[RMDB]
RNA sequence: GGGAACGACUCGAGUAGAGUCGAAAAAAAUAUCCGCAGGUAAAUCAUCAUAAACAUGUAGAGCGUUCAUCGCUGGGAUGACAUAAUCAAUUAUAAACCUAUCAACUUCCUCCCUUGCAAAUUGGCUUAAUAAAUUGUCGUCGAAGUUUGGAUAUUGUCCAUUUUGUAAUUUCGAUUACAAAAUGGAAAAAGAAACAACAACAACAAC
Reactivity to 2A3 in 0.01 (KOAc 150mM, MgCl2 10mM, bicine 150mM(pH8.5), 24C), signal-to-noise 1, nucleotides 027 to 156: a000a000a000u040a030u040c030c010g040c060a050g000g140u090a110a110a030u110c040a000u050c010a010u270a190a040a070c080a040u090g160u100a060g010a010g060c000g000u130u180c090a130u110c110g000c080u040g040g060g000a010u000g010a060c010a030u180a110a030u080c080a020a060u150u110a100u210a090a130a020c040c000u050a150u180c090a040a030c000u090u070c000c110u000c000c020c010u010u030g110c040a030a100a170u080u000g010g000c050u010u030a030a010u090a070a050a120u120u090g010u000c080g010u000c040g040a010a020g030u030u050u050g050g000a030u060a010u170u130g030
Reactivity to DMS in 0.01 (KOAc 150mM, MgCl2 10mM, bicine 150mM(pH8.5), 24C), signal-to-noise 2, nucleotides 027 to 156: a080a110a050u010a070u020c010c030g030c120a110g060g050u010a010a080a120u010c040a030u000c040a100u000a070a070a100c130a110u010g010u020a080g040a090g020c040g000u000u000c100a100u000c020g010c010u000g020g010g020a050u000g020a040c080a120u000a060a100u010c070a060a080u000u000a170u010a040a070a070c030c010u000a090u000c050a010a060c050u000u000c040c030u010c020c010c030u000u000g010c040a050a030a110u010u000g030g030c060u010u000a080a100u010a080a110a070u010u010g020u000c040g010u000c010g010a080a180g000u000u010u000g020g010a080u000a090u000u010g050
Record summary: Structure probing data (2A3 and DMS) for a 207-nucleotide construct. The DMS profile rests on 3,279 reads. The data come from the RNA Mapping Database (RMDB), library OK3TST. The RNA was probed in 150 mM KOAc, 10 mM MgCl2 and 150 mM bicine (pH 8.5) at 24 C.